[RMDB]
RNA sequence: GGGAACGACUCGAGUAGAGUCGAAAAGAGCGUCGAGAGACGAAGAGAAGUGCAUAGAUCCACAACGGAGAACGUAAUAAUGCACCCAUGUGGUUUAGUGUCCGGAACAACGGGCACAAGAGGCAGACGAGCUAUACCGUUUCGACGGUAUAGCUCGAAAAGAAACAACAACAACAAC
Reactivity to 2A3 in 0.01 (KOAc 150mM, MgCl2 10mM, bicine 150mM(pH8.5), 24C), signal-to-noise 2, nucleotides 027 to 126: g070a020g020c060g000u000c040g070a000g000a000g000a090c060g000a040a000g090a040g000a110a060g070u070g030c030a000u050a020g020a070u060c000c030a050c030a170a130c160g000g000a200g020a070a000c010g050u040a010a010u100a140a000u080g000c000a000c000c000c000a020u120g010u040g100g000u060u050u100a140g000u000g000u000c030c000g010g030a010a140c040a090a070c070g000g000g000c000a000c070a000a050g030a050g060g070c070a000g000a100
Reactivity to DMS in 0.01 (KOAc 150mM, MgCl2 10mM, bicine 150mM(pH8.5), 24C), signal-to-noise 3, nucleotides 027 to 126: g030a130g080c020g000u020c000g020a200g000a300g000a090c030g000a050a020g020a070g000a070a070g000u030g020c000a000u020a100g000a190u000c010c000a130c120a080a150c120g010g010a070g050a050a040c120g070u020a100a060u000a090a020u000g020c060a080c080c050c020a130u010g030u000g000g000u000u010u000a080g000u000g010u010c020c000g000g030a190a140c300a060a240c000g010g000g000c020a000c000a000a010g000a070g000g000c070a000g000a300
An RNA of 177 nucleotides, treated with 2A3 and DMS and read out base by base. For 2A3, 1,196 sequencing reads were counted. The DMS profile rests on 2,878 reads. Source: RMDB library OK1LIB, as collected in RNAgym. For 2A3 the reverse transcriptase was SuperScript II with manganese. The RNA was probed in 150 mM KOAc, 10 mM MgCl2 and 150 mM bicine (pH 8.5) at 24 C.